[RMDB]
About this RNA: The record gives the reactivity of an RNA of 177 nucleotides to DMS and 2A3. The reactions ran in a buffer of 150 mM KOAc, 10 mM MgCl2 and 150 mM bicine (pH 8.5), at 24 C. Reactivities are rounded to 0.1 and cut off at 0 and 3. Reactivities are given for positions 27 through 126. For 2A3, 1,709 sequencing reads were counted.

RNA sequence: GGGAACGACUCGAGUAGAGUCGAAAAAGCGAUCGACAUGCAUGCAUGCAUCAUGCAUGGUACCAUCUAGGUAGCGAGAGCGUAUGAGGUACCUAGCUAGCGUCUAGUCACGAUCCGCAGACGCUAGAUCCCCACUGGCUUUCGAGCCAGUGGGGAUAAAAGAAACAACAACAACAAC
Reactivity to DMS in 0.01 (KOAc 150mM, MgCl2 10mM, bicine 150mM(pH8.5), 24C), signal-to-noise 2, nucleotides 027 to 126: a050g030c080g000a010u000c010g030a210c010a020u000g000c000a010u020g070c210a180u020g000c300a090u000c020a020u000g000c000a010u000g020g000u000a110c040c020a090u050c020u000a050g020g010u000a030g010c000g000a180g010a190g010c110g010u000a050u010g000a180g020g000u000a060c010c000u000a040g020c100u000a000g010c010g020u010c000u000a050g020u020c050a080c030g020a010u000c030c010g010c030a030g010a010c000g020c000u010a000g010
Reactivity to 2A3 in 0.01 (KOAc 150mM, MgCl2 10mM, bicine 150mM(pH8.5), 24C), signal-to-noise 2, nucleotides 027 to 126: a000g150c170g030a000u010c030g010a010c000a010u000g000c010a000u000g000c040a070u200g040c040a220u140c000a000u100g050c010a010u030g000g000u040a060c030c020a030u090c020u040a030g000g080u020a030g120c000g030a060g020a040g170c070g050u170a150u190g180a080g080g020u020a010c000c000u000a030g090c010u020a000g010c000g010u000c010u040a120g000u040c020a000c000g020a020u040c000c010g010c010a000g010a000c000g000c000u000a010g000